[RMDB]
The record gives the reactivity of an RNA of 177 nucleotides to 2A3 and DMS. The RNA was probed in 150 mM KOAc, 10 mM MgCl2 and 150 mM bicine (pH 8.5) at 24 C.
RNA sequence: GGGAACGACUCGAGUAGAGUCGAAAAUGCAGUGAGGUCACCUCCUGGGUUUGUGACAUAGCAGUGGUUGCCACCGAGAUGAUAGCUUUAUCAGCAACUCUGCUUUGCAAUGACUUCACAGCAAGGUCUAUUAUUCAGCGUUCGCGCUGAAUAAUAGAAAAGAAACAACAACAACAAC
Reactivity to 2A3 in 0.01 (KOAc 150mM, MgCl2 10mM, bicine 150mM(pH8.5), 24C), signal-to-noise 3, nucleotides 027 to 126: u050g000c010a010g010u000g020a000g000g000u020c010a020c040c020u140c020c100u180g110g010g060u080u180u230g140u070g020a070c020a010u030a000g010c000a010g000u060g100g030u030u000g020c030c030a100c070c100g090a130g000a140u150g010a040u060a060g070c080u110u220u050a040u040c010a020g010c000a000a010c000u000c010u010g000c020u020u020u010g000c000a020a040u030g000a000c000u000u000c010a010c000a000g010c000a050a000g110g050u000
Reactivity to DMS in 0.01 (KOAc 150mM, MgCl2 10mM, bicine 150mM(pH8.5), 24C), signal-to-noise 2, nucleotides 027 to 126: u000g000c000a060g050u000g000a020g010g020u000c000a090c090c030u010c110c130u020g000g010g000u000u000u020g000u010g020a200c150a060u000a020g000c020a020g000u010g030g000u000u000g030c020c110a130c290c230g020a100g010a170u000g010a050u000a080g030c230u000u000u020a050u000c050a110g020c010a010a010c000u000c000u000g000c000u000u000u000g010c080a060a100u010g010a010c010u000u000c010a010c010a080g010c020a080a100g020g000u000
DMS adducts were read by reverse transcription with MarathonRT. The 2A3 profile rests on 3,215 reads.